An RNA of 177 nucleotides, treated with DMS and 2A3 and read out base by base. For 2A3 the reverse transcriptase was SuperScript II with manganese. The reactions ran in a buffer of 150 mM KOAc, 10 mM MgCl2 and 150 mM bicine (pH 8.5), at 24 C.
RNA sequence: GGGAACGACUCGAGUAGAGUCGAAAAGAACAGGAUAACAGGACGCAAGAUAGGAAGUUCGGAUGAAUCGAGAAGAGCCGUAACUCGAAAACAACGGCAGCGUCCUGAAGAAUUUACGGCUCGAGAAGGGUACUAGGUAGUUCGCUACCUAGUACCCAAAAGAAACAACAACAACAAC
Reactivity to DMS in 0.01 (KOAc 150mM, MgCl2 10mM, bicine 150mM(pH8.5), 24C), signal-to-noise 2, nucleotides 027 to 126: g000a180a180c140a200g040g000a150u080a150a240c000a000g020g010a020c000g020c010a050a070g020a300u010a150g000g060a130a100g000u000u030c020g000g000a110u050g000a130a060u000c000g020a010g030a260a040g020a010g000c000c000g040u000a020a040c010u000c020g010a020a120a050a110c180a050a140c020g000g030c050a050g000c000g040u000c000c010u000g000a020a020g000a030a130u050u030u000a020c000g010g000c000u010c090g070a130g000a110a060
Reactivity to 2A3 in 0.01 (KOAc 150mM, MgCl2 10mM, bicine 150mM(pH8.5), 24C), signal-to-noise 2, nucleotides 027 to 126: g030a070a010c050a060g150g000a060u050a160a030c000a000g010g020a000c000g000c020a000a120g050a260u170a180g120g160a050a030g050u140u060c020g000g000a060u080g080a010a030u050c000g000a010g010a130a010g000a000g010c000c000g000u000a060a050c000u000c000g030a010a010a010a010c090a010a080c000g070g000c050a000g000c000g010u050c000c010u000g000a020a000g000a000a070u000u090u110a000c000g000g000c000u010c010g000a040g000a100a160